About this RNA
Chemical mapping of a 207-nucleotide RNA with DMS and 2A3. It was measured as part of the RMDB library OK3TST. Values cover nucleotides 27 to 156. For 2A3, 571 sequencing reads were counted.
[RMDB]
RNA sequence: GGGAACGACUCGAGUAGAGUCGAAAAAAAAUAAUAGUCCUACUUCUAGAGAAGCUGUAACUUAUUUUAUGAACGUGCUUGCAGGUGGAAACAUUGAAAGUUUUUGUCAACUCUUAACUGCUGAAAUGUAUGCUAGGUUCAUUGAUUUUAAAGUUGAACUCAUACAGUCAUUCGUGACUGUAUGAGUAAAAGAAACAACAACAACAAC
Reactivity to DMS in 0.01 (KOAc 150mM, MgCl2 10mM, bicine 150mM(pH8.5), 24C), signal-to-noise 1, nucleotides 027 to 156: a050a030a070a060u000a030a050u000a070g000u000c000c000u000a030c020u010u000c020u000a230g010a230g000a090a070g050c000u010g010u000a020a090c000u000u000a040u000u000u000u030a050u000g020a020a030c020g040u000g020c070u000u000g010c030a060g020g020u010g020g000a270a050a080c030a070u010u020g030a030a070a090g000u000u000u000u000u000g000u000c050a010a050c070u000c000u000u000a030a030c030u000g030c000u030g000a060a100a120u010g040u000a070u000g010c010u010a070g020g000u000u000c020a070u000u000g000a090u010u010u020u000a050a070a170g000u000u000g010a070
Reactivity to 2A3 in 0.01 (KOAc 150mM, MgCl2 10mM, bicine 150mM(pH8.5), 24C), signal-to-noise 1, nucleotides 027 to 156: a000a000a000a000u150a020a010u070a080g080u030c030c000u000a040c000u040u000c080u140a010g010a000g010a250a000g040c010u020g040u090a050a030c060u090u120a060u300u170u030u050a040u150g030a060a010c010g000u040g000c010u020u050g060c020a000g000g060u060g040g070a070a090a030c030a080u040u150g020a030a100a200g090u090u050u020u000u020g080u040c030a030a030c010u000c040u240u130a080a070c000u000g070c000u010g040a110a160a000u150g000u000a010u140g000c000u060a060g090g000u010u050c020a030u010u070g100a080u010u100u070u180a050a180a000g000u040u100g020a010